[RMDB]
RNA sequence: GGGAACGACUCGAGUAGAGUCGAAAAUAGCCGUUAUGCGCGAAGCGGUGUAGCGUCACUUUGAUGGCGGUACUAUGAAUUGAUGCAAGGUGUGGAGCGAACUUAAACAGUUCUGGUGGUGCUCUGAAAAACAAAUAGGCGUUCGCGCCUAUUUGAAUCCACAGAUCUAGUUCGCUAGAUCUGUGGAAAAAGAAACAACAACAACAAC
Reactivity to DMS in 0.01 (KOAc 150mM, MgCl2 10mM, bicine 150mM(pH8.5), 24C), signal-to-noise 1, nucleotides 027 to 156: u000a120g020c010c030g020u000u000a020u010g040c000g000c010g000a100a090g040c030g000g020u000g020u010a050g000c020g050u000c080a010c020u000u000u000g020a110u040g020g010c010g010g010u000a070c050u000a110u010g040a090a130u000u010g020a160u000g000c000a060a080g020g030u020g020u000g020g020a090g020c020g000a010a050c050u000u000a100a140a150c070a080g010u000u000c030u000g020g070u000g000g010u000g020c020u000c050u000g000a050a070a060a060a120c000a020a020a020u010a000g010g020c010g020u000u000c300g010c020g040c000c000u000a000u010u000u000g000a140a100
Reactivity to 2A3 in 0.01 (KOAc 150mM, MgCl2 10mM, bicine 150mM(pH8.5), 24C), signal-to-noise 2, nucleotides 027 to 156: u090a000g030c010c000g010u040u030a060u180g060c040g010c040g040a040a010g000c010g000g020u020g030u010a030g080c010g010u000c040a030c050u100u160u270g210a260u090g010g000c010g010g030u010a020c030u050a100u190g080a120a070u090u060g020a060u070g050c030a000a050g060g000u040g030u050g020g020a010g000c030g000a000a010c000u070u070a090a030a030c060a060g010u040u040c020u090g010g010u010g010g010u030g010c000u000c050u050g030a040a040a000a000a040c000a000a010a000u000a000g010g000c000g020u060u040c220g010c000g000c070c000u000a000u000u000u000g010a010a020